[RMDB]
This 207-nucleotide RNA was probed chemically with DMS and 2A3. Conditions: 150 mM KOAc, 10 mM MgCl2 and 150 mM bicine (pH 8.5), 24 C. As a SHAPE reagent, 2A3 marks flexible, mostly unpaired nucleotides at the ribose 2'-OH. For DMS the reverse transcriptase was MarathonRT. 2A3 adducts were read by reverse transcription with SuperScript II with manganese. Values cover nucleotides 27 to 156.
RNA sequence: GGGAACGACUCGAGUAGAGUCGAAAAAAGGGCCACACUCUGGGUGAAGGGACCUGCAUUCCGAUGGCCUUGUUUUCCUGCUCACUGGCUGUGGCCGCACAAGCAGGUGCACAACCUGGCUCCCUUCCUGCAAGGGGGUUGCUCCAGAGCUGGCCGCUCUAGACUCAGUAUUCGUACUGAGUCUAGAAAAAGAAACAACAACAACAAC
Reactivity to DMS in 0.01 (KOAc 150mM, MgCl2 10mM, bicine 150mM(pH8.5), 24C), signal-to-noise 2, nucleotides 027 to 156: a040a050g020g040g030c080c020a020c080a060c020u000c030u000g000g050g000u000g030a100a080g000g000g010a030c000c010u000g010c050a190u010u000c110c050g020a180u020g050g010c000c040u010u010g000u010u010u000u010c030c010u010g000c060u010c050a170c060u010g030g050c000u010g000u000g040g010c000c020g010c080a100c150a100a170g020c020a020g030g000u000g030c080a040c040a090a120c020c000u000g000g010c010u000c000c000c000u000u000c040c150u000g050c080a090a060g020g030g000g030g020u000u010g020c060u000c010c020a080g000a050g020c120u000g010g030c040c010g020c090
Reactivity to 2A3 in 0.01 (KOAc 150mM, MgCl2 10mM, bicine 150mM(pH8.5), 24C), signal-to-noise 2, nucleotides 027 to 156: a010a000g100g000g000c080c010a010c010a000c010u000c010u010g020g030g030u170g120a070a060g030g010g060a030c010c010u010g010c010a100u200u150c060c030g080a140u080g030g010c010c000u010u020g030u040u080u050u030c030c010u000g060c060u070c070a170c130u180g040g000c030u030g010u080g130g000c050c030g020c010a060c000a000a060g000c010a010g000g070u050g050c090a070c010a170a120c010c010u040g010g010c000u000c010c000c000u030u020c040c070u170g030c090a020a020g010g010g000g010g000u020u060g000c000u000c000c000a000g000a020g000c030u000g000g010c000c010g000c010